[RMDB]
RNA sequence: GGGAACGACUCGAGUAGAGUCGAAAAAGUCACUUACGAGUGACAGGAUUGUGGGGGGUCGCUCUAGGCACCGCAGCACUGUGCUGGGGAUGUUGCAGCUGCCUGGGAGUGACUUCACACAGUCCAACAGAGCCAGCCUAUUCGUAGGCUGGCUCUGAAAAGAAACAACAACAACAAC
Reactivity to 2A3 in 0.01 (KOAc 150mM, MgCl2 10mM, bicine 150mM(pH8.5), 24C), signal-to-noise 2, nucleotides 027 to 126: a010g020u000c010a000c010u010u120a040c280g060a020g000u000g000a000c010a000g000g010a020u010u000g000u000g000g010g000g000g030g000u010c000g000c000u000c010u020a000g000g000c000a000c000c050g000c010a000g000c000a000c040u150g050u160g180c140u090g040g050g010g060a120u020g010u040u020g000c000a020g000c130u000g000c000c020u070g070g010g000a000g000u010g000a000c030u000u010c000a000c010a000c000a000g000u010c010c000a010a020